Structure probing data (DMS) for a 177-nucleotide construct. The RNA was probed in 150 mM KOAc, 10 mM MgCl2 and 150 mM bicine (pH 8.5) at 24 C. For DMS, 1,265 sequencing reads were counted. High DMS reactivity at an A or C suggests that its Watson-Crick edge is free.

RNA sequence: GGGAACGACUCGAGUAGAGUCGAAAAAUCGUGGACCAAGAUCAGUUUCAUCAAUUGCACGUCAAUGGGUAGGGCAAUUAGGAGAGUUGACGAUUAAGUUGUUAGGCUGGGAGAUAGACUCUGCAAACUCUGUAUCCUCUUUCGAGAGGAUACAGAGAAAAGAAACAACAACAACAAC
Reactivity to DMS in 0.01 (KOAc 150mM, MgCl2 10mM, bicine 150mM(pH8.5), 24C), signal-to-noise 2, nucleotides 027 to 126: a070u000c030g060u000g000g020a120c080c020a110a120g000a100u000c090a050g030u010u010u000c080a080u000c060a060a050u010u010g000c070a070c070g000u010c120a080a080u010g000g000g050u000a080g000g020g000c010a020a070u010u010a050g000g000a110g020a070g020u010u000g010a050c040g000a090u020u000a050a100g030u000u000g000u000u010a070g000g030c110u000g000g030g020a050g000a090u000a060g000a050c030u010c020u020g010c060a130a080a120